[RMDB]
RNA sequence: GGGAACGACUCGAGUAGAGUCGAAAACGCUUUACCUGGUGCGUGCACCUAUCAGAGUACGCAUGGACAAAAACCUUAGCGAAGAAAAGUUGCGGUAUGUCAUAUUGCUCGUUGAUGCGCUGCGGGAAUCGCAUCCGCAGUUCGCUGCGGAUGCGAUAAAAGAAACAACAACAACAAC
Reactivity to 2A3 in 0.01 (KOAc 150mM, MgCl2 10mM, bicine 150mM(pH8.5), 24C), signal-to-noise 1, nucleotides 027 to 126: c080g000c000u120u140u090a090c000c000u000g020g020u050g090c000g010u000g000c000a170c040c000u130a060u180c080a060g000a000g170u000a060c030g020c070a070u000g000g010a030c020a000a100a060a000a000c040c050u170u220a040g000c000g150a200a030g170a140a280a000a020g100u160u150g000c020g000g000u020a090u220g080u040c020a050u030a000u220u080g100c030u010c010g070u100u170g030a070u070g000c000g000c070u120g000c000g000g050g070a010